Source: RMDB library RFMREP, as collected in RNAgym. The record gives the reactivity of an RNA of 177 nucleotides to 2A3 and DMS.
RNA sequence: GGGAACGACUCGAGUAGAGUCGAAAACACUGAGACCGCUCGUAGAAGACGAGUUCGAUAGACUUGGGGUGUACGCGUCGAGGCAACGAGACGUUUAGCCCGCGAGUACUAACAGGUCAAUGCCACAGGGAUUAUUAAUCUUCGGAUUAAUAAUCCCAAAAGAAACAACAACAACAAC
Reactivity to 2A3 in 0.01 (KOAc 150mM, MgCl2 10mM, bicine 150mM(pH8.5), 24C), signal-to-noise 2, nucleotides 027 to 126: c070a030c030u050g020a030g000a070c010c020g010c020u000c010g020u050a080g100a300a010g250a070c010g020a000g020u110u120c110g050a070u020a050g040a000c000u000u000g000g000g000g000u090g050u090a030c050g010c000g000u010c000g000a010g030g000c000a050a020c010g010a010g020a060c030g000u010u010u040a000g000c010c010c020g120c000g010a000g010u020a300c020u000a060a060c020a010g000g000u010c000a020a030u090g020c040c010a040c060a130
Reactivity to DMS in 0.01 (KOAc 150mM, MgCl2 10mM, bicine 150mM(pH8.5), 24C), signal-to-noise 3, nucleotides 027 to 126: c150a150c100u000g000a300g000a000c040c010g000c000u000c010g010u020a150g020a150a160g000a030c000g030a030g000u000u010c250g000a140u000a000g010a080c000u000u010g000g010g000g000u000g010u000a100c240g010c020g000u000c000g000a300g010g000c250a030a130c010g000a300g000a020c010g000u010u000u000a130g000c010c000c010g010c010g020a000g000u000a060c020u000a050a040c080a140g040g010u000c000a060a090u000g000c020c060a030c210a110
Reactivities are given for positions 27 through 126.